Chemical mapping of a 177-nucleotide RNA with DMS and 2A3. The RNA was probed in 150 mM KOAc, 10 mM MgCl2 and 150 mM bicine (pH 8.5) at 24 C. For DMS the reverse transcriptase was MarathonRT. The data come from the RNA Mapping Database (RMDB), library OK2TRN. DMS (dimethyl sulfate) methylates the pairing face of unpaired adenines and cytosines.

[RMDB]
RNA sequence: GGGAACGACUCGAGUAGAGUCGAAAAUUGGGGAUAUUAUAAAAAUUGAUACGCGUACGUGUGAAUAUAUUCAACGCGUCUAAAUGGAUUUAAAGCAAAUAGAAAAGCUCAUGAUUGCUAUGGGACGGAUACUUCCUCUAUUCGUAGAGGAAGUAUCAAAAGAAACAACAACAACAAC
Reactivity to DMS in 0.01 (KOAc 150mM, MgCl2 10mM, bicine 150mM(pH8.5), 24C), signal-to-noise 6, nucleotides 027 to 126: u010u000g000g010g020g010a180u010a060u010u010a090u010a050a050a070a100a050u000u000g000a180u000a030c020g010c040g020u000a070c230g020u000g020u000g000a080a080u010a090u010a060u010u000c020a120a040c030g000c000g000u000c080u000a040a040a050u000g000g000a230u010u010u010a060a060a090g000c070a030a040a130u010a100g000a090a090a090a110g000c060u000c060a060u000g000a120u000u000g010c060u010a070u000g000g000g010a110c270g000
Reactivity to 2A3 in 0.01 (KOAc 150mM, MgCl2 10mM, bicine 150mM(pH8.5), 24C), signal-to-noise 4, nucleotides 027 to 126: u040u030g010g010g010g010a020u040a100u300u130a120u190a150a120a030a080a030u040u080g030a030u020a130c010g000c020g020u020a050c070g020u080g010u030g150a110a030u250a030u040a040u170u070c020a040a000c000g000c010g010u010c010u020a060a070a040u040g010g030a030u060u070u160a070a040a020g020c020a040a070a040u050a100g070a050a130a040a010g010c030u000c030a030u080g070a180u060u190g000c020u060a030u030g020g000g020a010c030g020